[RMDB]
RNA sequence: GGGAACGACUCGAGUAGAGUCGAAAAAGCUUGGAAAGAGUUCUAAGCGUAUUGGUACUCAGUCAUUGCGAAUUCUGAAAGCAAAUACUCCUGUAAAGCAAGGUAAUCUCCGCAGAUCAUGGACGGCAGAAGGACCGAGCUAUGGUGGCAGUGGUUAAAUUUACCGUGGAUUCGUCCACGGUAAAUUAAAAGAAACAACAACAACAAC
Reactivity to 2A3 in 0.01 (KOAc 150mM, MgCl2 10mM, bicine 150mM(pH8.5), 24C), signal-to-noise 2, nucleotides 027 to 156: a000g010c010u020u020g030g020a100a080a060g170a260g070u080u030c020u030a050a070g000c030g020u060a080u050u100g020g010u050a040c030u030c120a040g070u040c050a120u040u110g020c040g070a110a050u110u030c060u100g040a090a060a030g000c000a000a010a030u040a040c010u000c060c010u010g060u110a070a100a000g000c040a020a000g000g020u050a070a070u040c010u020c030c010g000c030a010g030a150u050c010a020u050g040g030a040c000g020g000c050a020g080a110a080g090g030a030c030c010g020a030g000c010u020a030u060g020g000u010g020g000c030a030g050u030g050g000u030u080a060
Reactivity to DMS in 0.01 (KOAc 150mM, MgCl2 10mM, bicine 150mM(pH8.5), 24C), signal-to-noise 2, nucleotides 027 to 156: a110g040c000u000u000g000g010a060a060a190g030a230g010u000u010c010u000a070a030g030c040g020u000a060u010u030g020g010u000a060c070u000c030a090g010u010c090a130u000u000g000c050g000a110a150u000u000c030u000g020a150a150a100g030c020a060a040a180u000a030c050u010c030c040u000g010u000a040a050a100g010c030a050a080g020g000u000a020a060u000c030u000c030c090g020c020a100g020a030u020c110a090u000g010g000a110c040g000g010c030a040g000a180a090g030g060a110c020c010g000a120g030c050u000a050u000g030g030u000g010g000c060a100g020u000g070g010u000u000a050